RNA sequence: GGGAACGACUCGAGUAGAGUCGAAAAGAUAUGGAACUGGAACGCUAGCUGGUAGUCGGAAACGACUACACAGCUUGGACCGUUCAGUUCCUAAGUCAAAACCGGCGUAUCUUCGGAUACGCCGGAAUCCUAUUAACUAGUUCGCUAGUUAAUAGGAAAAAGAAACAACAACAACAAC
Reactivity to DMS in 0.01 (KOAc 150mM, MgCl2 10mM, bicine 150mM(pH8.5), 24C), signal-to-noise 4, nucleotides 027 to 126: g000a030u000a290u020g000g000a000a000c010u000g020g010a020a030c010g020c080u000a020g030c000u000g010g000u000a000g000u000c000g000g010a080a060a160c000g010a020c000u000a000c000a070c000a000g010c010u000u010g030g000a100c300c020g010u000u000c000a010g000u000u010c000c000u000a000a070g000u010c030a100a070a160a230c010c000g010g000c000g020u000a000u000c000u000u010c220g030g010a030u000a000c000g000c000c000g000g010a000a020
Reactivity to 2A3 in 0.01 (KOAc 150mM, MgCl2 10mM, bicine 150mM(pH8.5), 24C), signal-to-noise 2, nucleotides 027 to 126: g030a000u030a030u100g000g000a010a000c020u050g110g190a040a040c010g030c150u100a110g000c000u040g010g000u020a000g010u000c010g010g000a130a040a030c000g000a000c000u020a000c110a010c000a000g000c000u000u080g020g080a040c000c050g000u000u000c000a000g000u000u000c000c010u000a050a000g040u010c030a000a020a140a230c010c010g000g000c000g010u010a000u010c000u030u060c210g160g010a000u000a020c010g000c020c020g010g000a000a010